[RMDB]
Chemical mapping of a 177-nucleotide RNA with 2A3. 2A3 adducts were read by reverse transcription with SuperScript II with manganese. Reactivities are given for positions 27 through 126.
RNA sequence: GGGAACGACUCGAGUAGAGUCGAAAAGACAAGUUCACCGAUCGUGAUUUCAGGUUGAGGGACUAAAAAACGCCGUCAAUUCUGACCGCACUUUUCACAUAAAUAAAAAGCCGAAUAACAUAUUCGGGGCAUCAUUGGCUUUCGAGCCAAUGAUGCCAAAAGAAACAACAACAACAAC
Reactivity to 2A3 in 0.01 (KOAc 150mM, MgCl2 10mM, bicine 150mM(pH8.5), 24C), signal-to-noise 1, nucleotides 027 to 126: g020a000c090a050a040g090u090u050c130a140c250c010g000a120u120c040g000u000g010a010u040u100u160c000a000g030g030u010u000g040a070g030g040g030a000c030u300a050a050a050a050a050a050c130g000c000c000g100u000c000a000a130u300u030c000u000g000a030c010c000g000c060a030c000u110u100u130u150c070a070c000a150u300a090a220a000u080a000a170a070a000a000g010c130c000g000a000a000u150a220a020c040a000u150a000u130u000c000g000g000